[RMDB]
RNA sequence: GGGAACGACUCGAGUAGAGUCGAAAAACUAAUUGUCUAUUGGGAAAUGGAGGAUAAGAACAUUAUUCAAUUUGUGCAUGGAGAGGAAGACCUGAAGGUUCAGCAUAGUAGCUACAGACAGAGGGCCUGAGACAUGCAUUUUCGAAUGCAUGUCUCAAAAAGAAACAACAACAACAAC
Reactivity to DMS in 0.01 (KOAc 150mM, MgCl2 10mM, bicine 150mM(pH8.5), 24C), signal-to-noise 2, nucleotides 027 to 126: a090c050u000a030a090u000u000g000u000c040u020a060u010u000g000g000g010a090a090a090u000g010g000a090g000g000a070u000a050a050g010a140a140c050a050u000u000a040u010u000c070a040a090u010u000u000g020u010g010c080a090u010g050g000a040g000a070g000g010a090a090g010a060c080c040u010g010a080a070g010g010u010u000c100a030g010c050a070u000a100g010u000a050g010c050u000a040c160a060g000a080c070a040g010a140g010g010g020c130c060
Reactivity to 2A3 in 0.01 (KOAc 150mM, MgCl2 10mM, bicine 150mM(pH8.5), 24C), signal-to-noise 1, nucleotides 027 to 126: a010c050u080a050a080u090u140g030u040c070u020a040u050u050g040g000g120a020a080a100u110g030g060a050g030g030a040u070a190a070g060a110a000c010a110u100u090a020u130u120c020a020a100u000u080u100g090u060g040c050a030u050g000g010a080g000a020g070g030a010a020g020a050c050c050u090g080a040a020g100g000u090u060c000a000g000c020a000u020a070g060u040a020g000c060u040a060c020a020g080a050c020a010g030a030g020g000g000c030c010